[RMDB]
RNA sequence: GGGAACGACUCGAGUAGAGUCGAAAAGAGAGGAUAACCACCGGCGCGCGUCACUGAUAUAUCCACCGGGGGGUAAGGGGAGAAAAGGAUACAGCGCGACGAAGUUAGCACGCUGCCCCGUAAGGCUUGAAGAGUGUAGUGUUCGCACUACACUCAAGCCAAUUAAGCGUUUCGACGCUUAAUUGGCAAAAGAAACAACAACAACAAC
Reactivity to 2A3 in 0.01 (KOAc 150mM, MgCl2 10mM, bicine 150mM(pH8.5), 24C), signal-to-noise 1, nucleotides 027 to 156: g050a010g010a000g010g020a040u070a080a060c050c010a010c000c050g010g030c030g000c010g000c000g080u040c010a040c110u070g010a040u090a020u020a010u240c040c030a110c160c050g040g000g000g020g010g010u050a030a020g040g000g020g000a010g040a000a020a040a020g050g010a010u050a110c030a030g020c000g000c010g040a030c020g000a010a050g020u060u110a020g010c040a000c030g020c010u030g010c020c000c010c000g030u030a040a000g000g010c020u090u090g080a140a060g010a060g000u010g000u010a000g010u010g060u040u030c060g000c070a000c000u000a000c000a000c000u000c000a000a000